[RMDB]
RNA sequence: GGGAACGACUCGAGUAGAGUCGAAAAUACCGUCUUGUCCCCGACGGUUUCAAUCCAUAGCUUCACGUUGUGUAGCGUAGGUGGAAGGUAUCGUGUGGUGUAUAAACACCACAUAGUCUCUUAGGGGUCAAGCUGAUAAACUUCGGUUUAUCAGCAAGAUGGUAAUGUAGUUCGCUACAUUACCAUCAAAAGAAACAACAACAACAAC
Reactivity to 2A3 in 0.01 (KOAc 150mM, MgCl2 10mM, bicine 150mM(pH8.5), 24C), signal-to-noise 9, nucleotides 027 to 156: u060a000c000c000g000u010c030u090u180g020u020c000c000c000c000g000a000c000g000g020u000u040u060c040a040a060u020c000c010a040u040a100g000c010u050u060c010a020c070g300u300u300g030u080g040u070a020g020c030g100u110a090g020g120u020g020g030a030a030g080g030u110a050u180c050g000u010g000u000g030g000u010g050u020a090u100a300a250a020c010a000c000c000a000c000a000u000a000g020u000c010u000c010u100u200a020g000g000g000g000u010c040a010a030g000c000u000g000a000u000a000a000a000c000u030u040c120g060g000u000u000u000a000u000c000a000g000c000a000a010
Reactivity to DMS in 0.01 (KOAc 150mM, MgCl2 10mM, bicine 150mM(pH8.5), 24C), signal-to-noise 4, nucleotides 027 to 156: u010a070c010c000g000u000c010u000u000g000u000c010c010c000c080g030a050c050g000g010u000u000u000c050a100a130u010c030c020a120u000a160g000c000u000u010c040a050c020g040u000u010g000u000g030u000a050g020c030g030u000a050g020g020u000g010g010a090a070g010g030u000a050u000c060g040u000g010u000g010g020u010g020u000a150u010a130a140a100c010a020c000c010a010c010a010u000a030g010u000c030u000c030u010u000a120g040g020g020g020u000c040a060a230g010c000u010g010a020u000a000a010a010c000u000u010c300g030g010u010u000u010a010u000c000a010g010c000a000a010